[RMDB]
RNA sequence: GGGAACGACUCGAGUAGAGUCGAAAAUCUUUCCAGAAUCCAGGGGGCUCCGAGCGCAACGGGCCGCGGUGCUCUGGAGUAGAGGCUCUGCCCUCGAAACACCAUCGAUCGUCCCUGCAGCCUUCGUCUCUAAGAGUAUGUUCGCAUACUCUUAGAGAAAAGAAACAACAACAACAAC
Reactivity to 2A3 in 0.01 (KOAc 150mM, MgCl2 10mM, bicine 150mM(pH8.5), 24C), signal-to-noise 3, nucleotides 027 to 126: u020c020u020u070u030c010c010a050g110a100a080u070c080c060a040g030g010g000g010g000c020u040c050c050g070a070g040c050g020c030a050a060c040g000g010g000c000c000g000c010g000g000u000g000c000u000c000u010g010g000a000g000u000a000g000a010g000g010c040u060c190u300g050c030c000c010u000c010g000a000a000a000c010a030c090c030a000u010c010g090a300u040c010g020u000c020c000c010u020g030c030a020g000c010c000u030u050c030g060u000
Reactivity to DMS in 0.01 (KOAc 150mM, MgCl2 10mM, bicine 150mM(pH8.5), 24C), signal-to-noise 3, nucleotides 027 to 126: u020c120u000u010u010c010c030a160g000a100a080u010c090c080a060g000g000g020g000g000c040u000c120c060g000a050g000c150g000c050a070a090c230g000g000g010c130c030g010c000g000g000u000g010c010u010c020u000g010g000a070g020u000a060g010a020g000g010c020u010c140u000g000c180c010c000u000c000g000a140a130a160c020a000c190c010a020u000c010g030a140u010c030g010u010c000c000c010u000g020c070a150g000c020c030u000u000c060g000u000